RNA sequence: GGGAACGACUCGAGUAGAGUCGAAAAAUCAGCCUUCGUUCUGUAAACGGGGUUGGAUCCGACUCUCAUAGGCUCUCCAACCCAACUCCUACUCAAUACGUCCUCGUCGUACAGAACGGUAAUAUGUAAAACGAAGGCUGCUUCGGCAGCCUUCGAACUCUAUGUGUCUCUUCGGAGACACAUAGAGAAAAGAAACAACAACAACAAC
Reactivity to 2A3 in 0.01 (KOAc 150mM, MgCl2 10mM, bicine 150mM(pH8.5), 24C), signal-to-noise 1, nucleotides 027 to 156: a020u090c020a030g000c000c010u090u040c030g000u010u000c000u000g030u050a050a080a100c050g050g000g000g000u000u000g010g000a060u300c050c000g080a130c080u090c010u050c190a220u150a240g000g010c000u000c000u000c000c000a010a030c010c010c000a000a020c030u010c000c000u110a160c050u060c140a040a220u070a200c050g020u090c030c010u090c020g050u000c030g000u010a000c020a000g000a030a000c010g010g030u060a100a080u150a100u110g170u160a030a020a000a020c000g000a000a000g030g000c000u000g000c010u030u080c080g080g000c000a030g000c000c000u000u010c000g010a010a010